[RMDB]
Conditions: 150 mM KOAc, 10 mM MgCl2 and 150 mM bicine (pH 8.5), 24 C.
Structure probing data (DMS) for a 177-nucleotide construct.
The DMS profile rests on 1,352 reads.
RNA sequence: GGGAACGACUCGAGUAGAGUCGAAAAGAUAUGGAUCCAGGGAGUGCCAUACUCGUACGAUGAAAUCCUUCGGAAACGAAGGAUGGAGUACACGCGAGUAUGGCACGAAGAACUGGAUCCUAAGUCACACUUUUGCUCUGUUCGCAGAGCAAAAGUGAAAAGAAACAACAACAACAAC
Reactivity to DMS in 0.01 (KOAc 150mM, MgCl2 10mM, bicine 150mM(pH8.5), 24C), signal-to-noise 2, nucleotides 027 to 126: g000a050u020a300u040g000g000a000u000c010c010a020g050g000g000a190g020u000g000c010c010a020u000a000c010u000c000g020u010a140c300g020a020u000g000a300a220a010u000c000c000u010u000c010g010g000a170a060a300c010g000a010a050g020g000a010u000g000g010a300g000u000a080c090a050c270g000c000g010a010g000u000a000u000g010g110c000a030c010g000a020a140g030a080a170c000u000g000g000a000u010c000c000u000a020a140g000u000c030a280